[RMDB]
RNA sequence: GGGAACGACUCGAGUAGAGUCGAAAACGUUGCUUCGGCAACGGAGACGCGUACUACGUUCUCUAGCGUGAGGCUUGGAUUUAAGAAAUCCUCCCAAAUAGGAGGAAAGUAUUUGUCAGCCUUCGGGACGUAUCGCAGGCUUGCCCUUCGGGGCAAAUCCUGACAACUGGUUCGCCAGUUGUCAGGAAAAAGAAACAACAACAACAAC
Reactivity to 2A3 in 0.01 (KOAc 150mM, MgCl2 10mM, bicine 150mM(pH8.5), 24C), signal-to-noise 2, nucleotides 027 to 156: c010g040u000u000g020c000u000u170c270g210g020c000a010a010c010g010g000a020g040a030c150g020c000g020u040a160c050u000a000c050g010u110u060c070u000c100u150a080g090c110g090u150g080a000g000g000c170u180u130g130g000a040u300u300u160a000a000g000a010a010a000u000c000c030u100c020c030c060a260a300a120u300a130g000g000a000g000g020a010a000a000g020u000a010u030u000u000g000u010c030a020g030c010c050u000u010c000g000g000g010a000c000g040u030a100u300c000g000c010a000g040g000c060u000u040g000c010c010c000u020u080c300g130g000g000g000c030a050a000a020
Source: RMDB library RNAMAK, as collected in RNAgym. Structure probing data (2A3) for a 207-nucleotide construct. Reactivities are given for positions 27 through 156. For 2A3, 686 sequencing reads were counted. The RNA was probed in 150 mM KOAc, 10 mM MgCl2 and 150 mM bicine (pH 8.5) at 24 C.